[RMDB]
RNA sequence: GGGAACGACUCGAGUAGAGUCGAAAACGCUGGGCCUCCAUGCAAGGACAUGUUACGUCUGAAGCGCGCACGGACGUAUAACAACAGCCUUGCCGCUGGAGGCCUGUGCUGAAGCGCGCACGGCAACCGAAAGGUGCGAGGCCACCGUUCGCGGUGGGGACGAACUGAAGUUCGCUUCAGUUCGUCCAAAAGAAACAACAACAACAAC
Reactivity to 2A3 in 0.01 (KOAc 150mM, MgCl2 10mM, bicine 150mM(pH8.5), 24C), signal-to-noise 1, nucleotides 027 to 156: c130g020c000u020g000g010g000c150c000u000c000c000a050u090g020c000a000a000g000g000a110c200a300u130g000u060u110a020c100g010u000c000u110g040a220a000g030c000g000c020g040c000a020c040g000g000a000c000g050u110a070u170a290a070c070a040a000c000a030g000c000c000u010u010g000c000c040g000c000u040g000g000a110g020g000c060c000u000g000u020g000c000u060g000a110a000g010c000g090c000g000c030a000c000g100g040c050a120a070c030c000g020a070a020a000g000g010u030g000c000g060a160g000g000c000c000a010c000c030g080u120u110c180g010c020g070g000u020g050g030